[RMDB]
RNA sequence: GGGAACGACUCGAGUAGAGUCGAAAAUUUCUUGAUCUUCAAAAACGAUUGAUGAAUUGUCACCAUAGGUAACGAUAUUUUUUGGUAACAACUGCAUAAUCGACAUUGAUGUUACCGAUUUACCUGAGCUUGAGUGACUUUUCGAAGUCACUCAAGCAAAAGAAACAACAACAACAAC
Reactivity to DMS in 0.01 (KOAc 150mM, MgCl2 10mM, bicine 150mM(pH8.5), 24C), signal-to-noise 1, nucleotides 027 to 126: u010u000u010c090u010u000g000a010u000c010u000u000c080a110a040a060a180a190c150g000a030u000u000g000a080u000g010a030a010u000u000g000u000c080a110c010c060a090u000a020g000g000u010a000a060c240g000a140u000a000u000u000u030u010u010u020g010g020u030a010a010c000a030a050c100u000g000c110a010u010a130a010u000c060g040a040c080a040u000u000g000a060u000g000u010u000a020c040c020g000a030u010u000u010a030c020c010u000g030a120
Reactivity to 2A3 in 0.01 (KOAc 150mM, MgCl2 10mM, bicine 150mM(pH8.5), 24C), signal-to-noise 1, nucleotides 027 to 126: u000u020u000c000u020u040g020a000u000c020u130u090c070a140a020a000a040a040c110g040a040u010u100g050a020u040g000a000a060u010u020g010u020c030a060c150c020a020u110a050g000g000u050a080a070c100g020a140u020a200u090u230u060u020u100u090g020g000u000a000a000c030a010a020c030u050g060c090a030u070a160a180u210c070g110a080c050a080u030u070g050a020u020g020u020u010a000c000c000g000a030u010u000u050a020c010c000u000g030a020
Source: RMDB library OK2TST, as collected in RNAgym. An RNA of 177 nucleotides, treated with DMS and 2A3 and read out base by base. Reactivities are given for positions 27 through 126. The 2A3 profile rests on 762 reads. For DMS the reverse transcriptase was MarathonRT. The RNA was probed in 150 mM KOAc, 10 mM MgCl2 and 150 mM bicine (pH 8.5) at 24 C.